[RMDB]
RNA sequence: GGGAACGACUCGAGUAGAGUCGAAAAGAAAAGGAUCGAACUGGUGGUUCGAGAUCCGAAAAGGUUCUCUACUGACAUACAGUCCACUGAAUAAAGUGGUGGGAAAUAAACCACAGUAGUAACCAAAGGGAUGAUAUUAGUUCGCUAAUAUCAUCCCAAAAGAAACAACAACAACAAC
Reactivity to DMS in 0.01 (KOAc 150mM, MgCl2 10mM, bicine 150mM(pH8.5), 24C), signal-to-noise 5, nucleotides 027 to 126: g000a080a060a130a120g000g000a010u000c000g020a030a000c010u010g000g030u070g020g020u000u000c010g000a060g020a060u000c000c000g010a120a050a150a080g000g010u000u010c150u010c000u010a020c010u000g020a010c010a190u030a110c280a170g000u000c000c010a000c000u010g000a100a120u050a070a080a050g020u000g000g000u000g000g010g010a050a060a120u030a070a100a170c010c010a010c010a000g010u000a010g000u000a010a020c000c000a060a090a110
Reactivity to 2A3 in 0.01 (KOAc 150mM, MgCl2 10mM, bicine 150mM(pH8.5), 24C), signal-to-noise 8, nucleotides 027 to 126: g110a000a090a010a020g020g000a010u000c000g000a010a000c020u140g160g080u250g080g010u190u000c000g010a020g010a080u000c000c000g040a050a050a000a050g020g000u040u010c110u000c000u100a000c000u010g020a000c010a060u300a080c040a100g000u000c000c000a010c010u050g070a200a190u230a270a170a010g000u010g050g000u020g000g010g040a040a300a040u180a060a130a010c000c000a000c000a000g000u000a000g000u000a000a010c000c000a030a080a000